[RMDB]
An RNA of 177 nucleotides, treated with DMS and read out base by base.
Values cover nucleotides 27 to 126.

RNA sequence: GGGAACGACUCGAGUAGAGUCGAAAAGAUAUGGAACACCUUGAAGAAUGUGAGAAGGUGGGAGUAUUUAGUCGGAAACGACUAUGUACGAAGAACACCUUCUCACAUUUGGAGUGUUCCUAAGUCACAGCCAAUACGUGUUCGCACGUAUUGGCUGAAAAGAAACAACAACAACAAC
Reactivity to DMS in 0.01 (KOAc 150mM, MgCl2 10mM, bicine 150mM(pH8.5), 24C), signal-to-noise 1, nucleotides 027 to 126: g010a000u030a300u030g030g010a020a000c030a000c000c300u020u000g020a130a130g000a000a010u000g030u000g000a010g000a000a000g010g000u000g010g000g000a120g010u000a000u000u000u010a000g020u000c000g000g000a170a030a160c010g000a000c000u000a000u000g030u000a020c000g000a060a220g000a150a250c000a000c010c000u010u000c000u000c000a000c010a000u000u010u010g000g010a060g030u010g010u000u000c000c010u010a010a100g000u000c040a220